[RMDB]
RNA sequence: GGGAACGACUCGAGUAGAGUCGAAAAGAAAGAAGGCAUCAGUUUUCAAGAUGGAGGUCACCGUCGCUGUCGCCCCGGUUUUUCUUUCAACUGACGCUUCAAUUGAAACAUGUGUGGGGUGUCUGAAUAUGUGAUGGGGUUUCGACCCCAUCACAUAAAAAGAAACAACAACAACAAC
Reactivity to DMS in 0.01 (KOAc 150mM, MgCl2 10mM, bicine 150mM(pH8.5), 24C), signal-to-noise 2, nucleotides 027 to 126: g000a130a040a100g010a130a080g000g020c020a030u000c050a100g000u000u000u010u020c070a130a050g050a090u010g000g000a120g010g040u020c070a080c060c000g030u020c010g020c020u030g000u000c020g020c060c000c000c070g030g040u000u000u010u010u000c020u020u040u000c110a010a210c060u020g010a010c070g000c000u000u000c000a020a010u050u020g000a070a090a140c110a060u040g020u010g000u000g020g000g020g010u000g030u010c030u000g000a140a280
Reactivity to 2A3 in 0.01 (KOAc 150mM, MgCl2 10mM, bicine 150mM(pH8.5), 24C), signal-to-noise 1, nucleotides 027 to 126: g080a010a030a030g080a020a020g000g000c010a040u030c080a060g040u020u010u190u120c050a030a060g000a050u050g050g040a030g000g120u040c020a040c000c000g070u000c100g010c070u020g030u010c070g080c010c000c000c030g030g010u000u000u000u030u130c040u000u010u010c060a090a070c000u030g000a000c020g000c060u000u000c030a010a160u110u120g060a070a020a070c120a130u180g070u070g010u020g180g060g000g000u010g080u020c000u000g040a170a050

Chemical mapping of a 177-nucleotide RNA with DMS and 2A3. For 2A3 the reverse transcriptase was SuperScript II with manganese. The RNA was probed in 150 mM KOAc, 10 mM MgCl2 and 150 mM bicine (pH 8.5) at 24 C.